Conditions: 150 mM KOAc, 10 mM MgCl2 and 150 mM bicine (pH 8.5), 24 C. This 177-nucleotide RNA was probed chemically with 2A3 and DMS. DMS (dimethyl sulfate) methylates the pairing face of unpaired adenines and cytosines. Reactivities are given for positions 27 through 126. 2A3 adducts were read by reverse transcription with SuperScript II with manganese.
RNA sequence: GGGAACGACUCGAGUAGAGUCGAAAACACUUCUUCUCUGCUGCACACUCUGCACCAGGAGUACAUUAGGUCUCUGACAUUCAAGAUAUUCAAUCUCAAAGUGGGAGAAGAAUAUGGGUCGAAGAUAACGUGGUAUCCGAUUCGUCGGAUACCACGUAAAAGAAACAACAACAACAAC
Reactivity to 2A3 in 0.01 (KOAc 150mM, MgCl2 10mM, bicine 150mM(pH8.5), 24C), signal-to-noise 1, nucleotides 027 to 126: c050a000c000u020u060c000u060u030c060u040c000u030g000c000u000g050c040a050c020a030c040u130c020u090g000c010a010c040c010a020g010g030a000g050u070a010c060a170u130u210a050g110g000u000c010u030c010u070g020a010c010a000u050u060c110a140a020g040a110u000a020u000u010c000a040a030u070c010u030c040a250a300a080g190u240g050g030g000a010g000a070a050g010a040a000u000a030u060g040g020g050u030c010g000a020a000g050a120u110a100
Reactivity to DMS in 0.01 (KOAc 150mM, MgCl2 10mM, bicine 150mM(pH8.5), 24C), signal-to-noise 1, nucleotides 027 to 126: c100a120c210u010u000c040u010u010c040u030c000u000g000c140u010g050c080a010c150a110c120u000c030u000g020c010a070c010c070a120g020g000a070g000u010a120c100a190u000u020a030g010g000u000c000u000c030u020g000a140c020a040u000u000c140a110a040g000a060u000a000u000u000c020a010a280u020c010u000c060a100a070a070g090u000g000g000g000a010g010a240a060g000a030a020u000a010u000g000g020g010u020c020g000a080a050g030a010u000a060